RNA sequence: GGGAACGACUCGAGUAGAGUCGAAAAACAAAUCAACGAAGCACUCGACACUUACCCAGACCGCGAGUUCGUCAACACCGUAACCGAGUUACUUAGCACUGCAAACCCAGAAUCACUCGUCGCAGCAGGUUACGAAAGAGUUCGCUCUUUCGUAACCAAAAGAAACAACAACAACAAC
Reactivity to 2A3 in 0.01 (KOAc 150mM, MgCl2 10mM, bicine 150mM(pH8.5), 24C), signal-to-noise 2, nucleotides 027 to 126: a000c010a020a080a020u120c080a010a100c120g050a030a000g070c010a000c100u030c030g050a020c030a000c060u120u150a100c030c000c010a000g050a040c020c040g070c030g020a020g040u090u040c030g050u020c020a040a040c060a050c030c030g080u080a070a000c020c060g020a020g070u080u010a030c030u040u060a010g000c020a030c070u040g030c010a040a080a030c000c030c000a040g030a050a030u070c010a000c070u050c030g110u060c040g010c030a030g080c030a050
Reactivity to DMS in 0.01 (KOAc 150mM, MgCl2 10mM, bicine 150mM(pH8.5), 24C), signal-to-noise 2, nucleotides 027 to 126: a060c070a070a070a060u010c110a070a090c110g010a060a090g020c110a080c040u000c010g030a040c140a140c160u000u010a110c040c030c010a060g000a030c080c050g060c020g030a110g000u000u010c050g010u000c000a030a100c130a100c100c060g030u000a080a100c040c110g010a080g000u000u000a070c060u000u010a070g000c010a120c070u000g000c060a010a100a060c060c010c040a040g000a080a120u000c100a050c080u010c060g000u010c080g010c100a020g020c100a050
About this RNA
This 177-nucleotide RNA was probed chemically with 2A3 and DMS. For 2A3, 1,281 sequencing reads were counted. For DMS, 779 sequencing reads were counted.